Chemical mapping of a 207-nucleotide RNA with 2A3. Conditions: 150 mM KOAc, 10 mM MgCl2 and 150 mM bicine (pH 8.5), 24 C. 2A3 adducts were read by reverse transcription with SuperScript II with manganese. For 2A3, 777 sequencing reads were counted. Values cover nucleotides 27 to 156.
[RMDB]
RNA sequence: GGGAACGACUCGAGUAGAGUCGAAAAGUCUCCUAGAGAGCUUGGCCGUCGGGCCUUACACCUCGACUUGCUGAGUUUCUCUAGGAGAGUCCCUUUCCCAGCCAGAGGUGGCUGGUCAAACAAUACCAAAACUCUUGCUAGUUCGCUAGCAAGAGAAGUUCUCAUAACCGUUCGCGGUUAUGAGAACAAAAGAAACAACAACAACAAC
Reactivity to 2A3 in 0.01 (KOAc 150mM, MgCl2 10mM, bicine 150mM(pH8.5), 24C), signal-to-noise 1, nucleotides 027 to 156: g030u000c000u000c000c000u010a000g000a000g000a000g010c000u000u010g010g030c020c000g020u000c010g000g040g000c000c010u030u160a080c070a000c000c010u040c010g010a000c000u140u110g010c000u020g050a000g050u100u300u020c000u000c000u000a000g010g000a000g000a000g000u000c000c000c000u010u160u010c000c000c000a000g000c000c000a010g000a000g000g000u000g000g000c010u140g040g070u260c040a000a020a040c130a030a010u010a000c010c000a050a000a120a170c000u000c000u000u000g020c000u000a000g020u060u010c190g090c070u000a000g010c000a000a000g010a000g000a020a000